[RMDB]
Conditions: 150 mM KOAc, 10 mM MgCl2 and 150 mM bicine (pH 8.5), 24 C. Chemical mapping of a 177-nucleotide RNA with DMS. DMS (dimethyl sulfate) methylates the pairing face of unpaired adenines and cytosines. Source: RMDB library OK2TST, as collected in RNAgym.
RNA sequence: GGGAACGACUCGAGUAGAGUCGAAAAGUAGGAUUCCCCCCAUGACGGGGUGAAUGGGUUGCGCAGCUGCCACCACAACCGAGGGUCCCGCCAGGUGCUGCCGCCCAGGCCGACACGUCGCCCCUCACCUCCAUGGUACUUUCGAGUACCAUGGAGGAAAAGAAACAACAACAACAAC
Reactivity to DMS in 0.01 (KOAc 150mM, MgCl2 10mM, bicine 150mM(pH8.5), 24C), signal-to-noise 1, nucleotides 027 to 126: g010u020a100g010g020a300u010u010c000c000c000c080c050c060a120u000g000a050c100g020g000g000g030u000g000a050a090u000g010g030g000u000u000g050c180g060c040a070g030c040u000g070c040c000a100c080c030a080c110a060a040c070c020g020a160g040g000g000u000c000c010c030g030c050c100a130g000g020u000g000c000u020g000c000c020g000c000c020c000a090g010g010c020c040g020a050c080a110c060g000u000c000g000c020c000c010c000u000c050a180